Chemical mapping of a 207-nucleotide RNA with DMS and 2A3.

[RMDB]
RNA sequence: GGGAACGACUCGAGUAGAGUCGAAAAUGCACCAAAGGUCAUCUGCGAUGCUGUUUCCAGCUACCUGCUAGUACCGGAUCUAGGCUGCCAUUACCUCGUAAGGCUGACCAUUCUAGUCAACGGAUGCGAUUUCUUCCGAGGGCUCUUCGGGAUAUCCAUAAUGGUGCCAAUUCGUUGGCACCAUUAUAAAAGAAACAACAACAACAAC
Reactivity to DMS in 0.01 (KOAc 150mM, MgCl2 10mM, bicine 150mM(pH8.5), 24C), signal-to-noise 2, nucleotides 027 to 156: u000g000c070a140c000c020a050a130a140g010g020u010c060a120u000c050u000g030c070g010a150u000g010c010u000g010u010u010u010c050c000a180g020c030u000a110c020c030u010g040c070u010a180g000u020a110c040c010g030g020a110u000c010u000a060g010g000c030u000g000c030c030a050u010u000a080c000c010u000c110g020u000a050a060g040g020c100u010g030a190c220c010a070u000u010c000u010a130g030u010c200a090a110c110g020g000a060u000g000c000g000a180u000u000u010c010u000u000c020c010g050a060g010g010g000c030u000c040u000u010c050g010g000g030a140u000a060u000c080c060
Reactivity to 2A3 in 0.01 (KOAc 150mM, MgCl2 10mM, bicine 150mM(pH8.5), 24C), signal-to-noise 2, nucleotides 027 to 156: u070g020c020a000c020c000a060a000a020g010g010u040c040a070u000c060u070g050c050g020a050u060g020c020u030g050u090u120u020c110c010a000g010c010u040a020c010c020u060g030c050u050a040g050u040a080c060c100g050g000a020u010c030u040a040g030g000c040u030g040c010c020a040u040u090a100c020c000u010c000g010u010a020a000g000g010c010u010g010a010c000c010a000u020u000c020u060a090g300u090c050a080a020c170g030g000a010u010g020c010g000a020u040u010u060c010u010u000c030c000g010a010g000g000g010c010u020c000u050u080c010g030g010g000a060u080a060u160c010c010

Description:
Conditions: 150 mM KOAc, 10 mM MgCl2 and 150 mM bicine (pH 8.5), 24 C. For 2A3 the reverse transcriptase was SuperScript II with manganese.